[RMDB]
RNA sequence: GGGAACGACUCGAGUAGAGUCGAAAAGAGUGGAGACAACAAGAUGUUGGAACUAUGGGCCGAUCUCAUUAGGCCGGGUUCGGGUUGGCUAUUCACUGGCCUGCCCAUUCCAAGUCGGGAGUUGAGGGUUCGGGCUCGAGCGAAGGCUUGUGGUUCGCAUUCAUUUUGCGUUCGCGCAAAAUGAAUGAAAAGAAACAACAACAACAAC
Reactivity to 2A3 in 0.01 (KOAc 150mM, MgCl2 10mM, bicine 150mM(pH8.5), 24C), signal-to-noise 2, nucleotides 027 to 156: g040a010g010u060g020g030a040g030a020c030a090a020c030a070a100g060a130u100g030u090u030g030g010a010a020c040u040a170u160g020g010g000c000c000g010a070u050c040u010c100a070u120u160a060g020g050c000c040g020g010g000u070u070c050g000g000g000u000u020g000g010c000u040a070u140u260c130a100c220u030g000g000c000c000u010g010c010c020c000a010u080u000c000c010a070a030g080u100c030g020g010g020a070g030u070u090g010a040g050g000g030u020u120c010g040g040g000c030u060c060g010a010g000c040g060a080a010g000g000c000u020u050g010u020g000g020u010u000c010g000
Reactivity to DMS in 0.01 (KOAc 150mM, MgCl2 10mM, bicine 150mM(pH8.5), 24C), signal-to-noise 1, nucleotides 027 to 156: g020a170g020u000g000g000a130g030a140c060a060a090c010a120a200g020a090u010g000u000u000g010g000a040a090c020u010a010u000g040g090g030c030c030g010a130u000c050u000c040a120u000u000a130g030g020c000c020g030g000g000u000u010c090g020g010g020u010u010g000g030c000u010a060u000u010c190a110c170u010g020g000c010c010u000g040c000c000c030a090u020u030c030c010a100a050g010u020c010g000g000g010a130g000u010u000g010a120g060g030g030u000u000c020g020g040g040c040u020c090g030a090g020c060g000a080a180g020g040c030u000u000g020u000g010g030u000u000c010g000